Chemical mapping of a 177-nucleotide RNA with DMS and 2A3. The reactions ran in a buffer of 150 mM KOAc, 10 mM MgCl2 and 150 mM bicine (pH 8.5), at 24 C. The data come from the RNA Mapping Database (RMDB), library TTRDES. Reactivities are rounded to 0.1 and cut off at 0 and 3.
RNA sequence: GGGAACGACUCGAGUAGAGUCGAAAAGAUAUGGAUCCCAUAUUCGCGAUAAGACCCGGUCGGAAACGACCGAGGUCUUUUGACGCGAGUCAUGGGAUCCUAAGUCAAAAUCCACGUUCGCGUGGAAUCAUAAAUUUGACUUCGGUCAAAUUUAUGAAAAAGAAACAACAACAACAAC
Reactivity to DMS in 0.01 (KOAc 150mM, MgCl2 10mM, bicine 150mM(pH8.5), 24C), signal-to-noise 4, nucleotides 027 to 126: g010a060u000a300u000g010g000a010u000c000c000c010a030u000a030u000u000c010g020c000g010a170u010a020a010g000a010c000c000c010g010g000u000c000g030g000a130a120a240c010g000a000c000c000g000a050g020g010u010c000u000u000u000u010g030a200c090g020c010g000a010g030u000c220a000u000g000g010g010a000u000c000c000u000a000a090g010u000c030a060a090a150a190u000c000c000a010c010g010u000u010c160g020c010g030u010g000g000a040a090
Reactivity to 2A3 in 0.01 (KOAc 150mM, MgCl2 10mM, bicine 150mM(pH8.5), 24C), signal-to-noise 1, nucleotides 027 to 126: g030a040u070a040u180g000g000a010u020c000c000c020a000u010a000u000u030c010g010c030g080a100u060a160a040g000a000c030c020c000g000g000u010c020g010g070a100a110a130c000g000a010c040c010g000a020g010g000u010c040u000u000u010u060g000a000c000g000c000g020a000g020u100c140a000u000g000g000g010a000u000c000c000u000a000a010g020u010c010a090a000a000a270u010c000c000a000c000g010u080u100c300g030c020g160u010g030g000a030a070